[RMDB]
An RNA of 177 nucleotides, treated with DMS and 2A3 and read out base by base.
The RNA was probed in 150 mM KOAc, 10 mM MgCl2 and 150 mM bicine (pH 8.5) at 24 C.
RNA sequence: GGGAACGACUCGAGUAGAGUCGAAAAAUCUGUUGCAACUCACAGUCUGGGGCAUCAAGCAGCUCCAGGCAAGAAUCCUGGCUGUGGAAAGAUACCUAAAGGAUCAACAGCUCCUGGGGAUUUGGGGCGUGGAGUAUUCUUUCGAGAAUACUCCACGAAAAGAAACAACAACAACAAC
Reactivity to DMS in 0.01 (KOAc 150mM, MgCl2 10mM, bicine 150mM(pH8.5), 24C), signal-to-noise 2, nucleotides 027 to 126: a040u060c040u010g030u010u000g010c080a090a120c050u000c070a090c120a150g000u000c000u010g000g000g020g040c030a020u010c210a210a160g030c290a160g000c010u000c040c000a010g000g020c030a040a080g000a020a070u000c020c020u000g000g020c080u000g000u000g030g010a110a130a040g000a070u000a140c080c000u020a080a070a220g000g000a090u000c020a030a050c030a020g000c110u040c160c150u020g000g000g010g000a140u010u010u000g000g000g000g000
Reactivity to 2A3 in 0.01 (KOAc 150mM, MgCl2 10mM, bicine 150mM(pH8.5), 24C), signal-to-noise 3, nucleotides 027 to 126: a000u060c050u040g050u000u020g040c060a060a060c040u020c030a130c030a040g050u000c000u000g000g000g000g000c000a100u120c080a210a160g140c090a040g000c020u000c000c000a020g000g050c000a000a010g030a000a010u010c000c020u000g050g000c030u010g010u060g070g020a100a190a010g070a030u300a280c010c040u230a270a170a080g040g020a010u060c020a020a010c030a050g030c000u040c000c050u110g000g000g000g030a040u060u060u080g000g010g000g020
2A3 adducts were read by reverse transcription with SuperScript II with manganese.